RNA sequence: GGGAACGACUCGAGUAGAGUCGAAAACGCGCAGGGAUGUUUUCGAAUGUAUGUUUAUGCUCUCCCUUUGACUGAUUCACAGUUACGAGCAUGGAUUCGCAUACAUAGGCGUCUCAAAGGGAGCGCGUGACUAAUUUAAUUUCGAUUAAAUUAGUCAAAAAGAAACAACAACAACAAC
Reactivity to 2A3 in 0.01 (KOAc 150mM, MgCl2 10mM, bicine 150mM(pH8.5), 24C), signal-to-noise 9, nucleotides 027 to 126: c010g000c010g000c030a070g020g010g010a020u020g040u020u110u110u170c060g090a170a030u040g010u030a020u030g040u020u150u040a020u030g000c000u000c000u030c040c050c000u050u070u080g010a010c010u020g040a160u260u160c110a060c010a250g010u020u070a060c080g000a000g000c010a010u020g010g050a150u220u160c080g000c030a010u010a040c000a010u030a040g040g000c000g020u000c000u010c000a090a120a030g090g040g030a120g000c000g000c000g000
Reactivity to DMS in 0.01 (KOAc 150mM, MgCl2 10mM, bicine 150mM(pH8.5), 24C), signal-to-noise 9, nucleotides 027 to 126: c020g020c020g030c020a170g000g000g010a020u000g010u000u000u010u000c110g010a130a080u000g010u000a020u000g010u000u010u000a030u010g000c000u000c000u000c110c110c090u000u010u000g010a020c080u000g000a260u010u010c250a150c030a030g010u000u000a100c240g000a020g010c020a040u000g010g000a150u010u010c260g000c020a020u000a010c010a030u000a140g000g000c050g010u000c010u000c010a060a090a110g010g010g010a140g010c020g010c010g020